[RMDB]
RNA sequence: GGGAACGACUCGAGUAGAGUCGAAAAUACAUCUCCAAAACUAUCGCUUAUACGUUUAUCUUUAACGAUACCUAUACCUAGAUGGUUAUUUACUAACAGACAUUUUCCAGAUCUAUUGACUAUAACUCCUAUAGUUUCCACAUCAACCAAGUAAUGAAAGAAGUUAUGGAUUCGUCCAUAACUUCUUAAAAGAAACAACAACAACAAC
Reactivity to 2A3 in 0.01 (KOAc 150mM, MgCl2 10mM, bicine 150mM(pH8.5), 24C), signal-to-noise 6, nucleotides 027 to 156: u110a010c030a050u020c030u010c030c000a030a030a050a090c040u060a080u140c040g040c080u130u110a040u050a150c060g030u050u090u050a090u060c030u030u130u120a110a030c050g020a010u020a030c000c020u060a040u030a090c000c020u010a030g000a060u020g020g010u030u010a050u030u090u080a120c030u040a110a020c020a060g050a020c010a040u010u050u030u050c030c020a020g010a060u020c010u050a110u110u120g030a020c010u010a010u010a070a030c010u000c020c010u030a010u000a060g000u000u020u010c020c000a060c000a070u100c020a040a060c030c010a070a050g090u090a090a130u130g060a050
Reactivity to DMS in 0.01 (KOAc 150mM, MgCl2 10mM, bicine 150mM(pH8.5), 24C), signal-to-noise 3, nucleotides 027 to 156: u000a070c060a090u010c020u010c020c050a060a040a110a090c070u000a030u000c010g040c030u010u000a100u000a080c080g020u010u010u010a060u020c050u000u020u000a080a110c090g030a080u000a030c040c020u000a090u000a060c000c020u010a050g020a040u000g020g020u000u000a050u000u000u000a130c050u000a050a200c150a170g000a040c020a060u000u000u000u000c040c020a070g010a040u000c020u000a060u010u000g010a180c030u010a040u000a030a030c020u000c000c010u000a050u000a030g020u010u000u000c010c020a070c090a080u000c050a020a160c080c100a050a180g010u000a070a100u000g020a150
Structure probing data (2A3 and DMS) for a 207-nucleotide construct. It was measured as part of the RMDB library OK3TST.